[RMDB]
RNA sequence: GGGAACGACUCGAGUAGAGUCGAAAAGAUAUGGAGGGGAGUAGGGAGCACUUUGUGUACGACGAAGCGAAUCGGAAACGAUUCGCAGAGUACAUAAAGUGCGAAGAACUACUCCCCUCCUAAGUCAGAACAUAUUAAUGUUCGCAUUAAUAUGUUCAAAAGAAACAACAACAACAAC
Reactivity to DMS in 0.01 (KOAc 150mM, MgCl2 10mM, bicine 150mM(pH8.5), 24C), signal-to-noise 5, nucleotides 027 to 126: g000a050u000a300u010g000g000a020g020g010g010g010a020g010u000a000g000g000g020a100g010c000a010c000u000u010u000g040u000g010u000a020c060g020a200c300g000a140a160g000c000g010a010a000u000c010g000g000a090a050a130c000g010a020u000u000c010g040c010a000g000a070g000u000a010c000a000u000a000a000a000g010u000g010c010g000a040a080g010a090a220c010u000a010c000u000c000c010c000c000u000c000c000u000a000a050g010u000c030a150